[RMDB]
RNA sequence: GGGAACGACUCGAGUAGAGUCGAAAAGAUAUGGAAAGUUCUUUUGACGCUUUAAUAUCGGAAACGAUAUGAAGAGCGAUAAGAACUUCCUAAGUCAAAGGAUUGACUGCUUCGGCAGUCAAUCCAAGAGAUAUCCACAGUUCGCUGUGGAUAUCUCAAAAGAAACAACAACAACAAC
Reactivity to DMS in 0.01 (KOAc 150mM, MgCl2 10mM, bicine 150mM(pH8.5), 24C), signal-to-noise 2, nucleotides 027 to 126: g000a020u000a300u000g010g000a010a060a050g020u000u000c010u000u010u000u000g010a220c040g020c000u020u010u010a230a000u010a000u000c000g010g010a140a080a200c000g020a000u000a010u000g020a100a240g000a000g010c000g010a140u000a010a000g000a010a000c000u000u000c000c000u000a050a190g000u010c050a070a110a120g020g000a020u000u000g000a010c000u010g020c000u000u030c180g010g020c000a010g010u000c010a000a000u000c000c000a010a030
Reactivity to 2A3 in 0.01 (KOAc 150mM, MgCl2 10mM, bicine 150mM(pH8.5), 24C), signal-to-noise 2, nucleotides 027 to 126: g010a010u070a020u130g020g030a110a090a030g030u000u040c000u020u130u210u190g300a180c070g020c000u200u300u000a060a020u030a000u010c020g000g010a050a000a040c030g000a010u010a010u030g030a060a130g010a000g000c030g000a010u030a010a010g000a010a000c000u010u000c000c000u000a130a030g040u000c070a150a070a080g030g000a010u000u010g000a000c000u000g010c030u080u150c300g140g000c000a000g000u000c000a000a000u010c000c000a000a000